[RMDB]
RNA sequence: GGGAACGACUCGAGUAGAGUCGAAAACAUGUGGAGUGGCUGAGACUCAACUUUAGUGGGAUACGCCUUUCUCCCCCCGCCUGAGGGAGAAGGAAGAGACUAAUCAGGCUAGCUGCACGGAGGCCUGUCUUUGGGCUGAAGUGCUAGCGAAAUACGACACUAGCGAUAAGUUCGCUUAUCGCUAGUGAAAAGAAACAACAACAACAAC
Reactivity to 2A3 in 0.01 (KOAc 150mM, MgCl2 10mM, bicine 150mM(pH8.5), 24C), signal-to-noise 6, nucleotides 027 to 156: c060a040u100g030u060g060g050a040g020u040g020g040c040u030g010a020g030a070c020u030c070a050a080c050u120u140u090a050g010u110g030g020g010a010u020a040c000g010c010c000u070u300u040c020u000c010c000c000c000c000c000g000c010c000u000g000a010g000g000g000a000g000a000a000g020g010a020a000g020a000g040a020c140u170a060a030u030c000a000g000g000c000u000a010g000c000u010g000c000a010c020g010g010a030g010g010c010c010u090g080u230c120u170u280u300g020g000g000c010u010g000a000a000g000u000g000c000u000a000g000c000g000a000a000a010u210a050c110g040a010
Reactivity to DMS in 0.01 (KOAc 150mM, MgCl2 10mM, bicine 150mM(pH8.5), 24C), signal-to-noise 1, nucleotides 027 to 156: c080a050u010g020u010g000g020a130g040u010g000g010c020u000g020a180g030a060c030u000c030a110a080c040u000u000u000a080g010u000g010g030g000a130u000a090c040g000c010c030u000u000u030c000u000c000c000c000c000c000c040g000c040c010u010g010a020g000g040g030a000g000a050a020g000g000a130a100g000a180g050a130c090u000a080a110u010c040a060g020g020c020u000a230g000c000u000g020c000a070c030g010g000a300g030g000c000c010u000g000u000c130u000u030u000g000g020g030c010u010g000a300a280g000u010g010c000u020a000g060c000g010a140a040a170u000a020c070g000a250

The record gives the reactivity of an RNA of 207 nucleotides to 2A3 and DMS. The reactions ran in a buffer of 150 mM KOAc, 10 mM MgCl2 and 150 mM bicine (pH 8.5), at 24 C. The data come from the RNA Mapping Database (RMDB), library ARCHII. Reactivities are rounded to 0.1 and cut off at 0 and 3. High DMS reactivity at an A or C suggests that its Watson-Crick edge is free.